[RMDB]
RNA sequence: GGGAACGACUCGAGUAGAGUCGAAAAGCGCGCGAUAGGCGGGACUAGUCUUGGCCCUCGUCUUCCAGGACGGCGCGAACGGAGUCGGGGUGCAUACCGUGGUUCCACGGAGGAACGCUCCGCCUUGCGAGGCUUAUAGUUUCGACUAUAAGCCUCGAAAAGAAACAACAACAACAAC
Reactivity to 2A3 in 0.01 (KOAc 150mM, MgCl2 10mM, bicine 150mM(pH8.5), 24C), signal-to-noise 2, nucleotides 027 to 126: g030c010g020c010g000c030g060a070u100a060g020g000c020g010g030g010a020c040u060a050g100u060c040u040u090g240g020c010c000c000u030c010g010u010c010u100u070c020c010a060g070g060a040c030g030g040c010g000c020g010a090a020c060g060g020a010g010u020c010g020g020g000g010u100g000c010a020u050a100c000c010g000u000g020g140u300u170c130c010a010c010g010g000a010g020g050a080a030c010g000c000u010c030c000g000c000c010u000u020g040
Reactivity to DMS in 0.01 (KOAc 150mM, MgCl2 10mM, bicine 150mM(pH8.5), 24C), signal-to-noise 4, nucleotides 027 to 126: g010c040g020c020g030c040g000a150u010a050g010g010c010g010g000g010a030c030u000a120g010u010c130u000u000g020g010c020c000c010u010c030g030u000c010u000u020c080c100a160g010g010a100c070g000g010c020g000c010g000a100a130c140g010g000a020g000u000c000g010g000g010g010u010g020c050a150u000a040c020c010g010u000g000g020u010u010c130c020a040c010g000g010a100g000g010a100a210c080g010c010u000c000c010g000c060c010u000u000g010
Conditions: 150 mM KOAc, 10 mM MgCl2 and 150 mM bicine (pH 8.5), 24 C. Chemical mapping of a 177-nucleotide RNA with 2A3 and DMS. For DMS, 5,137 sequencing reads were counted. Source: RMDB library OK2TRN, as collected in RNAgym.